[RMDB]
RNA sequence: GGGAACGACUCGAGUAGAGUCGAAAAUCCGACUCUCAUAGGCUCUCCAACCCAACUCCUACUCAAUACGUCCUCGUCGUACAGAACGGUAGCAUGUUUUCCGAACAUCCGCGCUUGGGUAUACGAGAAAGGCGUAGAUUAUUCGUAAUCUACGCAAACGUUAUACUCGUUUCGACGAGUAUAACGUAAAAGAAACAACAACAACAAC
Reactivity to 2A3 in 0.01 (KOAc 150mM, MgCl2 10mM, bicine 150mM(pH8.5), 24C), signal-to-noise 4, nucleotides 027 to 156: u030c030c010g020a030c010u030c000u020c050a110u100a140g080g000c010u030c010u010c020c030a040a060c020c010c020a020a060c060u050c030c010u080a080c020u030c050a060a070u070a080c030g050u020c000c020u030c020g040u010c010g010u040a030c010a080g080a120a010c030g020g010u050a020g010c030a030u020g040u020u040u080u020c040c050g040a040a010c010a010u030c030c070g020c010g010c060u060u050g050g010g000u100a060u040a110c040g000a020g020a130a050a020g100g000c000g000u000a000g000a000u000u010a010u020u050c100g050u050a000a000u000c010u000a000c000g000c000a010a020
Reactivity to DMS in 0.01 (KOAc 150mM, MgCl2 10mM, bicine 150mM(pH8.5), 24C), signal-to-noise 2, nucleotides 027 to 156: u010c000c010g010a070c020u000c010u000c040a130u000a160g030g010c030u010c030u010c030c030a100a190c010c000c020a050a160c020u010c020c030u000a070c050u000c030a080a070u000a100c070g000u000c030c010u000c050g010u010c070g030u000a150c030a150g010a040a050c010g010g000u000a080g010c070a060u000g030u000u000u020u010c070c120g000a030a070c070a070u000c010c010g010c060g020c070u000u010g000g020g040u000a050u000a060c040g010a100g000a080a080a090g010g030c000g030u000a000g010a020u010u000a040u000u010c230g030u000a000a010u010c010u000a000c000g010c000a000a020
The data come from the RNA Mapping Database (RMDB), library M2RFPK. An RNA of 207 nucleotides, treated with 2A3 and DMS and read out base by base. The 2A3 profile rests on 3,743 reads. The RNA was probed in 150 mM KOAc, 10 mM MgCl2 and 150 mM bicine (pH 8.5) at 24 C. Reactivities are given for positions 27 through 156.